[RMDB]
RNA sequence: GGGAACGACUCGAGUAGAGUCGAAAACGUGAGGGAAAGCUGAAAAGCACCCCGGGAGGGGGGUGAAAAGAGCCUGAAACCAGGCGGCGAUAGGAGGGUGCGGCCCGAAAGGGUUGACCCUCCCCGAAGGAAACACGGGCGACCGUGGAGUACGAGGGAUAUAUGCCGUGUUCGCACGGCAUAUAUCAAAAGAAACAACAACAACAAC
Reactivity to 2A3 in 0.01 (KOAc 150mM, MgCl2 10mM, bicine 150mM(pH8.5), 24C), signal-to-noise 1, nucleotides 027 to 156: c040g020u120g010a080g000g020g080a070a140a060g000c040u030g020a050a050a130a040g010c020a050c020c020c010c020g020g020g020a060g060g080g000g000g030g020u040g030a040a090a040a000g070a020g020c020c010u040g050a120a040a020c130c010a020g010g000c020g030g010c070g040a060u150a100g000g000a000g000g040g010u130g260c060g020g000c000c000c000g020a030a010a000g010g010g010u000u030g000a000c000c000c020u010c000c000c000c020g030a040a020g000g010a030a010a010c010a010c020g000g020g000c060g020a030c010c000g000u020g020g000a000g000u000a010c020g000a080g000g040
Reactivity to DMS in 0.01 (KOAc 150mM, MgCl2 10mM, bicine 150mM(pH8.5), 24C), signal-to-noise 1, nucleotides 027 to 156: c050g010u020g000a140g010g000g050a080a040a180g030c050u020g020a050a070a080a210g050c000a060c010c010c020c020g040g000g000a220g020g060g000g040g080g060u000g000a010a010a080a120g000a080g010c010c010u000g010a050a060a140c100c040a010g000g010c100g040g040c010g030a220u000a000g040g000a010g000g010g030u000g020c000g000g010c000c010c000g020a090a140a290g010g000g040u000u020g000a040c030c000c000u010c000c000c000c030g000a110a150g020g000a260a170a260c000a020c020g000g000g050c300g000a120c000c000g070u020g000g010a090g010u000a080c040g040a140g020g040

Structure probing data (2A3 and DMS) for a 207-nucleotide construct. High DMS reactivity at an A or C suggests that its Watson-Crick edge is free. The RNA was probed in 150 mM KOAc, 10 mM MgCl2 and 150 mM bicine (pH 8.5) at 24 C. The 2A3 profile rests on 922 reads.